[RMDB]
RNA sequence: GGGAACGACUCGAGUAGAGUCGAAAAGGGGUCUCUGCUCAGUACAUAGUUGUCAGGCUUUGUAGCUGAAGCCUCCACGGCUACUGAGCCUUGGAUUUACUAUGGAACCGCAGAGACGGAGGCACCCGACACUUCUAAAUGUUCGCAUUUAGAAGAAGUUUCUCCCUUAGUUCGCUAAGGGAGAAACAAAAGAAACAACAACAACAAC
Reactivity to 2A3 in 0.01 (KOAc 150mM, MgCl2 10mM, bicine 150mM(pH8.5), 24C), signal-to-noise 1, nucleotides 027 to 156: g080g020g020g000u000c000u050c000u000g000c000u000c030a000g000u010a020c000a000u010a000g000u000u040g060u080c030a020g010g010c010u020u010u010g010u000a000g000c020u040g020a100a020g030c030c000u020c030c020a040c000g000g010c000u000a010c020u010g010a010g030c000c000u070u130g040g000a030u250u130u220a020c000u010a000u000g000g000a030a010c010c010g040c000a010g020a000g000a000c010g000g020a000g000g000c010a040c010c020c000g020a020c020a010c000u030u010c000u000a000a000a000u030g020u080u080c250g040c130a020u000u000u000a000g000a010a000g000a020a000

Source: RMDB library RNAMAK, as collected in RNAgym. The record gives the reactivity of an RNA of 207 nucleotides to 2A3. The reactions ran in a buffer of 150 mM KOAc, 10 mM MgCl2 and 150 mM bicine (pH 8.5), at 24 C. For 2A3 the reverse transcriptase was SuperScript II with manganese. The 2A3 profile rests on 1,396 reads. Values cover nucleotides 27 to 156.